RNA sequence: GGGAACGACUCGAGUAGAGUCGAAAAAUCGUGCCCUUGCGGAUCAGAGCGCGCAGCUCGUCAUUCGUAGGCAUGGUGCCUUCGAGAUAGGCUUCCAUCGCUGCUUCAUCGAUCUCGACAGCAAGCAGCUCGAUUAAAAUUUCGAUUUUAAUCGAGCAAAAGAAACAACAACAACAAC
Reactivity to 2A3 in 0.01 (KOAc 150mM, MgCl2 10mM, bicine 150mM(pH8.5), 24C), signal-to-noise 4, nucleotides 027 to 126: a000u020c010g000u020g000c020c010c010u040u140g010c020g000g010a020u040c060a090g000a000g000c030g000c070g050c140a030g010c010u000c030g060u040c030a010u020u010c000g010u010a030g000g000c000a020u030g040g000u020g010c000c000u000u020c040g050a060g010a060u040a020g010g000c000u040u000c020c010a060u120c130g000c040u020g000c000u040u050c020a120u150c060g020a030u000c020u010c020g020a020c020a020g010c010a040a010g010c000a020
Reactivity to DMS in 0.01 (KOAc 150mM, MgCl2 10mM, bicine 150mM(pH8.5), 24C), signal-to-noise 8, nucleotides 027 to 126: a030u000c010g030u000g010c020c010c160u010u010g010c000g010g000a010u010c140a200g000a010g010c010g000c300g000c240a200g000c010u000c010g000u010c190a030u000u000c000g020u000a030g000g000c010a020u000g010g020u000g000c000c000u000u000c010g000a020g000a020u000a010g010g000c000u000u000c020c010a140u010c180g010c030u000g000c010u000u000c050a200u000c120g000a030u000c020u000c010g010a040c030a100g010c160a030a020g000c030a040
Chemical mapping of a 177-nucleotide RNA with 2A3 and DMS. The reactions ran in a buffer of 150 mM KOAc, 10 mM MgCl2 and 150 mM bicine (pH 8.5), at 24 C. It was measured as part of the RMDB library OK2TST. As a SHAPE reagent, 2A3 marks flexible, mostly unpaired nucleotides at the ribose 2'-OH. For 2A3 the reverse transcriptase was SuperScript II with manganese.